Source: RMDB library OK2TRN, as collected in RNAgym. Chemical mapping of a 177-nucleotide RNA with DMS.
RNA sequence: GGGAACGACUCGAGUAGAGUCGAAAACGCGUUUUCAAGUCUCGUAAAUCGAUCGAUUCCGGAGACUUUUGAGCUAUUAUUCCGGAUGGUAAUUGGUCCACAAGACUCUUGGAAUAGAGUGUAUAUAAUCGGCCAUAAUGUUCGCAUUAUGGCCGAUAAAAGAAACAACAACAACAAC
Reactivity to DMS in 0.01 (KOAc 150mM, MgCl2 10mM, bicine 150mM(pH8.5), 24C), signal-to-noise 1, nucleotides 027 to 126: c050g030c040g030u000u000u010u000c020a050a020g000u000c030u030c030g050u000a050a070a090u000c020g010a000u000c100g010a110u000u000c010c020g040g000a010g020a070c110u000u000u000u010g000a130g020c140u050a070u000u000a090u000u000c020c010g010g000a060u000g000g000u000a040a010u000u010g010g000u000c030c050a030c140a050a020g000a040c060u000c100u000u020g010g030a080a020u000a110g000a110g000u000g000u030a060u010a160u000a100
About this RNA: Values are in units of 0.01, from 0 to 300, in steps of 10.